[RMDB]
RNA sequence: GGGAACGACUCGAGUAGAGUCGAAAAGCACAGCCCCGCUUGGUCAGGAAUGCAUGUGCUGAGGCCAGCACUGAGAUGAGCAGGCAUGCGUGUGUGGCCACCCCUAUUUCUGUGCUAUAGUGGGAGGCACUAUGUAGCCCUUCGGGGCUACAUAGUGAAAAGAAACAACAACAACAAC
Reactivity to DMS in 0.01 (KOAc 150mM, MgCl2 10mM, bicine 150mM(pH8.5), 24C), signal-to-noise 4, nucleotides 027 to 126: g020c010a010c020a030g020c050c010c000c140g020c050u010u000g020g010u010c020a070g010g020a140a100u010g010c030a050u010g010u000g010c000u000g010a160g010g010c130c010a040g020c020a050c070u010g000a120g000a140u000g000a050g010c010a040g000g000c020a090u010g010c100g010u000g010u010g030u010g000g000c010c020a120c010c010c000c020u000a030u000u000u000c020u010g000u000g010c020u000a090u000a010g010u000g010g000g000a120g020g010
Reactivity to 2A3 in 0.01 (KOAc 150mM, MgCl2 10mM, bicine 150mM(pH8.5), 24C), signal-to-noise 2, nucleotides 027 to 126: g050c010a010c000a030g010c000c000c000c010g010c020u040u060g010g060u050c010a020g030g130a130a100u170g060c000a040u110g010u020g100c020u030g040a100g100g180c110c010a000g000c030a030c090u120g050a060g050a240u080g030a020g060c040a020g010g020c010a020u080g030c100g040u120g030u050g030u040g090g000c010c000a010c000c000c000c000u030a060u010u050u000c020u030g040u000g020c050u030a000u020a050g100u260g050g030g000a030g050g000